An RNA of 177 nucleotides, treated with 2A3 and DMS and read out base by base.
For DMS, 5,313 sequencing reads were counted.
The reactions ran in a buffer of 150 mM KOAc, 10 mM MgCl2 and 150 mM bicine (pH 8.5), at 24 C.
For 2A3 the reverse transcriptase was SuperScript II with manganese.
RNA sequence: GGGAACGACUCGAGUAGAGUCGAAAACGAUGAGUGUAACGACUAACCCGGCCCCCACUAGUGUGCAGUGUCCGGCGGAAACCUCUCCGGGAGCAUCAAGGGCUGAAUAAGUCAUGCAAGUCAAACCGUUUCUUGUAAUUUUCGAAUUACAAGAAACAAAAGAAACAACAACAACAAC
Reactivity to 2A3 in 0.01 (KOAc 150mM, MgCl2 10mM, bicine 150mM(pH8.5), 24C), signal-to-noise 4, nucleotides 027 to 126: c050g030a040u080g010a030g110u060g020u080a140a060c090g020a010c010u020a030a040c000c020c000g020g000c000c010c000c010c000a050c050u040a090g060u010g020u020g260c000a010g010u020g100u200c000c000g000g010c020g010g030a070a130a170c040c040u080c010u000c030c000g020g020g010a020g010c000a000u020c010a000a040g000g000g000c000u000g010a010a020u150a080a010g010u010c000a020u100g010c010a050a030g080u010c000a030a050a080c030c060
Reactivity to DMS in 0.01 (KOAc 150mM, MgCl2 10mM, bicine 150mM(pH8.5), 24C), signal-to-noise 6, nucleotides 027 to 126: c130g010a100u000g000a250g010u000g020u000a100a110c160g010a030c040u010a090a170c260c110c020g010g000c010c000c010c050c040a150c170u000a090g010u000g010u000g010c010a140g000u000g010u010c020c010g020g010c170g000g010a060a110a100c220c130u010c040u000c010c000g000g000g010a110g020c010a030u010c080a090a170g000g000g000c000u000g020a040a060u000a160a040g010u000c010a100u000g010c050a040a190g010u010c030a040a120a140c130c090